[RMDB]
RNA sequence: GGGAACGACUCGAGUAGAGUCGAAAAAGCGCGCAAUGUGUACAUGGGUAUUCCCCCAUAUCUGUGUACUAUAGCUGAGAGGACUUGCUUGAUAGGGGGUGCAGUGCAAGUUUGGGUGGUGCGCGAAGUGUAUAUUUAAUUUCGAUUAAAUAUACACAAAAGAAACAACAACAACAAC
Reactivity to DMS in 0.01 (KOAc 150mM, MgCl2 10mM, bicine 150mM(pH8.5), 24C), signal-to-noise 8, nucleotides 027 to 126: a120g010c010g010c010g010c000a120a080u030g010u010g010u000a000c000a010u000g000g000g020u000a020u010u020c000c000c000c010c040a300u000a010u000c000u000g010u000g010u000a000c000u020a070u030a140g000c070u020g010a230g010a130g010g000a020c010u000u000g010c000u000u000g010a150u020a100g010g000g000g000g010u000g000c080a060g010u010g010c020a010a020g000u000u000u010g000g000g010u030g000g010u000g000c010g010c010g010a030a100
Reactivity to 2A3 in 0.01 (KOAc 150mM, MgCl2 10mM, bicine 150mM(pH8.5), 24C), signal-to-noise 7, nucleotides 027 to 126: a000g030c010g000c000g000c010a020a090u100g040u020g010u080a000c000a010u010g010g000g010u010a020u080u140c000c000c010c000c000a010u000a000u000c010u000g010u000g010u010a000c010u070a020u090a020g020c050u060g040a030g030a060g100g020a020c000u000u030g020c000u050u080g070a050u210a180g000g000g000g020g000u000g030c040a020g030u010g020c000a000a020g000u010u040u050g040g010g020u140g000g010u020g010c000g000c010g020a100a020